[RMDB]
RNA sequence: GGGAACGACUCGAGUAGAGUCGAAAAGCUCAGUGUGUGUCGCCCCGUCGUCUAGUGCUGGUUCUAGGGCUGGGGCGUCAGCAUCCACGUCUGACGGGACGGGCAGUAUCUCGCCAUCAACGAUAAACAUCAAUCAUGCUUUCGAGCAUGAUUGAUGAAAAGAAACAACAACAACAAC
Reactivity to DMS in 0.01 (KOAc 150mM, MgCl2 10mM, bicine 150mM(pH8.5), 24C), signal-to-noise 2, nucleotides 027 to 126: g040c020u010c030a110g020u010g030u000g020u000g020u000c010g000c000c000c000c010g010u010c050g000u030c010u000a010g020u010g020c070u010g000g000u010u000c010u010a040g010g000g000c020u010g050g010g000g010c020g020u000c030a090g000c030a040u010c110c060a090c130g000u000c040u010g010a070c050g020g000g010a040c060g000g020g040c060a060g010u020a080u010c040u000c020g020c050c060a050u020c130a080a060c050g000a100u030a100a070a120
Reactivity to 2A3 in 0.01 (KOAc 150mM, MgCl2 10mM, bicine 150mM(pH8.5), 24C), signal-to-noise 2, nucleotides 027 to 126: g040c020u010c060a050g000u000g030u020g010u010g020u100c020g000c010c000c000c000g010u010c000g040u010c010u000a010g010u020g120c080u170g140g140u120u030c010u030a020g040g030g000c070u110g070g010g000g010c030g010u000c000a000g000c000a030u020c020c020a130c060g040u000c040u090g040a080c050g050g010g020a030c010g000g000g000c010a040g000u040a060u110c040u050c030g010c000c040a090u080c020a040a030c040g100a040u100a090a140a000